[RMDB]
RNA sequence: GGGAACGACUCGAGUAGAGUCGAAAAACUGUUGUGAAGAAAUUCAGAGGGAAUAACAGUGGUCAACCUUCCACAGUUGUAGAUAAUUCAUUAAUGGUUGUCUUAGCUAUGAAUUAUUGCUUUGUGACAACUAGCUGUUAUUCGUAACAGCUAGUUGAAAAGAAACAACAACAACAAC
Reactivity to 2A3 in 0.01 (KOAc 150mM, MgCl2 10mM, bicine 150mM(pH8.5), 24C), signal-to-noise 7, nucleotides 027 to 126: a000c050u040g020u040u030g050u050g020a070a110g060a030a050a090u120u070c060a070g030a080g130g080g030a050a050u080a090a000c030a030g060u070g020g050u090c060a080a070c010c000u070u070c020c000a040c030a070g080u070u040g040u070a050g010a060u000a020a020u010u080c020a000u020u280a130a110u150g070g040u080u090g120u080c050u160u190a030g010c040u030a020u060g020a050a010u070u010a020u020u040g040c040u070u050u070g070u040g030a020
Reactivity to DMS in 0.01 (KOAc 150mM, MgCl2 10mM, bicine 150mM(pH8.5), 24C), signal-to-noise 5, nucleotides 027 to 126: a060c030u000g000u000u000g020u000g000a060a090g010a070a080a110u010u010c040a050g010a130g030g020g020a160a050u010a050a050c050a050g020u000g010g030u020c090a040a080c100c040u030u010c010c000a050c080a070g010u000u000g010u010a060g010a030u000a010a020u000u010c010a050u000u030a050a120u010g010g010u010u000g000u030c130u020u020a060g000c100u010a010u000g000a020a010u000u000a020u000u000g000c090u010u000u010g000u000g000a190